[RMDB]
RNA sequence: GGGAACGACUCGAGUAGAGUCGAAAAAAGAUAUGGAGCUCAUGCCAGCGAGUCUAAGCCUUGGACCCUCACUCGGAAACGAGUGAGGCUAGGCUAAUCUUGUGAAACAUGAGGCUCCUAAGUCAAAGGUAUUUUAGUUGUUCGCAACUAAAAUACCAAAAGAAACAACAACAACAAC
Reactivity to 2A3 in 0.01 (KOAc 150mM, MgCl2 10mM, bicine 150mM(pH8.5), 24C), signal-to-noise 2, nucleotides 027 to 126: a010a020g110a060u110a070u130g010g000a010g000c000u020c020a020u000g000c030c010a000g010c030g020a000g000u040c110u200a130a020g000c020c000u090u130g070g090a250c020c020c000u000c000a000c000u010c000g030g040a070a070a080c000g010a000g000u000g000a010g000g000c000u010a000g000g000c000u000a010a040u030c010u010u050g040u020g010a090a080a000c000a000u030g020a060g300g030c000u010c000c000u030a110a000g080u050c040a100a080a080
Reactivity to DMS in 0.01 (KOAc 150mM, MgCl2 10mM, bicine 150mM(pH8.5), 24C), signal-to-noise 2, nucleotides 027 to 126: a170a140g010a040u000a300u000g010g000a000g040c000u000c000a020u000g030c050c030a300g020c000g020a000g010u000c100u000a130a060g000c000c020u000u040g000g000a080c300c000c000u000c000a000c000u000c000g000g010a060a080a100c010g030a010g030u000g000a000g020g000c020u000a020g010g020c000u000a120a080u000c000u000u000g010u000g000a200a130a190c010a010u000g010a060g010g010c030u000c000c000u000a020a070g000u000c030a110a090a190